[RMDB]
RNA sequence: GGGAACGACUCGAGUAGAGUCGAAAAAAAUGAAAAAUUGGUGACAACCUCCACGGCGCCUGAUUUUGUAGCAUUUAAUGUCUUUCAGGGCAUUGAAACGGCUGUUGGCCAUUAUGUUCAUGCUCGCAACCGCGAGCCUUCGGGCUCGCGAAAAGAAACAACAACAACAAC
Reactivity to 2A3 in 0.01 (KOAc 150mM, MgCl2 10mM, bicine 150mM(pH8.5), 24C), signal-to-noise 3, nucleotides 027 to 129: a000a000a000u090g000a010a000a000a000a060u160u080g000g010u030g070a010c010a080a000c000c000u020c000c020a050c030g010g000c040g140c020c010u060g040a050u000u120u140u120g160u080a000g000c000a000u000u000u150a080a040u050g020u000c050u070u230u080c110a110g020g070g000c010a000u020u130g070a180a100a020c050g000g010c000u090g050u100u080g020g000c020c000a010u070u080a050u140g070u000u070c020a000u000g130c010u010c100g010c080a070a040c030
Reactivity to DMS in 0.01 (KOAc 150mM, MgCl2 10mM, bicine 150mM(pH8.5), 24C), signal-to-noise 3, nucleotides 027 to 129: a020a010a010u000g010a000a090a040a060a090u030u000g000g070u000g010a000c100a010a080c000c030u020c090c060a020c080g020g030c000g060c030c020u060g010a000u010u070u000u090g150u050a050g060c080a020u020u050u040a030a080u020g020u010c000u020u020u030c140a070g050g000g010c010a010u030u030g010a020a030a100c150g040g040c030u000g000u020u070g040g000c020c000a090u010u090a050u040g030u020u010c040a020u000g030c040u000c020g040c150a110a050c160
Structure probing data (2A3 and DMS) for a 170-nucleotide construct. The RNA was probed in 150 mM KOAc, 10 mM MgCl2 and 150 mM bicine (pH 8.5) at 24 C. It was measured as part of the RMDB library 15KLIB.